Structure probing data (2A3) for a 207-nucleotide construct. Source: RMDB library OK3TST, as collected in RNAgym.
RNA sequence: GGGAACGACUCGAGUAGAGUCGAAAACUUCAUGUUCAUGAAGAACUGGAUAUCUUCACCAAUAAAUCUAUCCUUACCAUCUGACCCACCGCCAUCUGUCUCUAAGAACAAUGGCUUAUCGCCAUGGAAUUGGCGUAUCUUAUCUGCUGCGUUGCGACGGUUCUAAGAGGUUCGCCUCUUAGAACCGAAAAGAAACAACAACAACAAC
Reactivity to 2A3 in 0.01 (KOAc 150mM, MgCl2 10mM, bicine 150mM(pH8.5), 24C), signal-to-noise 2, nucleotides 027 to 156: c010u040u010c010a050u150g060u120u060c090a060u070g040a110a140g000a120a090c080u110g030g040a000u020a040u070c110u140u090c040a070c090c050a030a170u270a120a110a020u110c100u080a050u050c000c030u040u020a070c040c030a060u020c040u010g130a100c030c000c000a030c070c030g030c000c000a030u010c050u080g030u000c020u000c030u130a060a170g070a110a000c000a000a030u060g000g000c000u000u150a160u040c030g030c000c000a010u080g050g150a170a070u070u010g010g000c010g000u030a070u010c070u060u070a070u010c110u060g010c000u050g040c020g070u020u010g060c000g060a080
Conditions: 150 mM KOAc, 10 mM MgCl2 and 150 mM bicine (pH 8.5), 24 C.
For 2A3 the reverse transcriptase was SuperScript II with manganese.